RNA sequence: GGGAACGACUCGAGUAGAGUCGAAAAGAAAGAAAGAAAUUAGCUCGCCAGUUAGCGAGGUCUGUCCCCACACGACAGAUAAUCGGGUGCAACUCCCGCCCCUUUUCCGAGGGUCAUCGGGACCAAAAAAACUCAGGCAACUUCGGUUGCCUGAGAAGACCACAAUUAUGUUCGCAUAAUUGUGGUCAAAAGAAACAACAACAACAAC
Reactivity to 2A3 in 0.01 (KOAc 150mM, MgCl2 10mM, bicine 150mM(pH8.5), 24C), signal-to-noise 1, nucleotides 027 to 156: g060a000a030a000g050a030a270a000g070a020a180a040u230u130a060g000c000u010c010g010c010c080a160g180u210u070a010g010c010g000a000g000g000u040c000u060g000u000c000c030c030c000a060c010a010c080g000a000c000a010g030a010u010a050a110u170c010g000g000g020u000g020c010a000a020c050u020c040c000c000g000c000c000c000c000u150u050u070u010c000c000g040a010g000g000g000u040c020a000u040c030g010g020g000a020c010c040a000a080a040a010a000a000a070c020u000c030a010g000g000c000a000a000c010u010u070c120g080g000u000u000g000c000c000u000g000a000g000a010a010